[RMDB]
Structure probing data (DMS) for a 207-nucleotide construct. The data come from the RNA Mapping Database (RMDB), library OK3TST. The reactions ran in a buffer of 150 mM KOAc, 10 mM MgCl2 and 150 mM bicine (pH 8.5), at 24 C.
RNA sequence: GGGAACGACUCGAGUAGAGUCGAAAAUGUACCUUAAACUAGUUUUUAUAGUUAGCAACAUUUAUGUUACAAUUUUAGGAUGUGGCAUUUUAUAGUUGCCAUAUUUAUAGACUAUUAAAUGCUUACAUGUAUUAGUUGCUAAAAAUGGUGAUGUAGAUCCUAAAUCAAACUUCGGUUUGAUUUAGGAAAAAGAAACAACAACAACAAC
Reactivity to DMS in 0.01 (KOAc 150mM, MgCl2 10mM, bicine 150mM(pH8.5), 24C), signal-to-noise 1, nucleotides 027 to 156: u010g020u010a150c040c020u000u030a100a060a050c040u000a020g010u000u000u000u000u000a130u000a110g010u000u000a070g030c010a210a020c000a090u000u000u010a030u000g010u020u000a060c020a050a090u000u010u000u000a190g020g020a080u000g010u000g010g050c000a040u000u010u000u010a120u000a070g020u000u020g020c140c150a020u010a050u000u010u010a150u020a180g000a040c020u000a060u000u000a030a010a050u000g000c010u000u010a070c080a020u010g020u000a080u000u020a080g030u010u000g020c000u010a020a060a110a060a100u000g010g040u000g000a110u000g000u000a050g010a190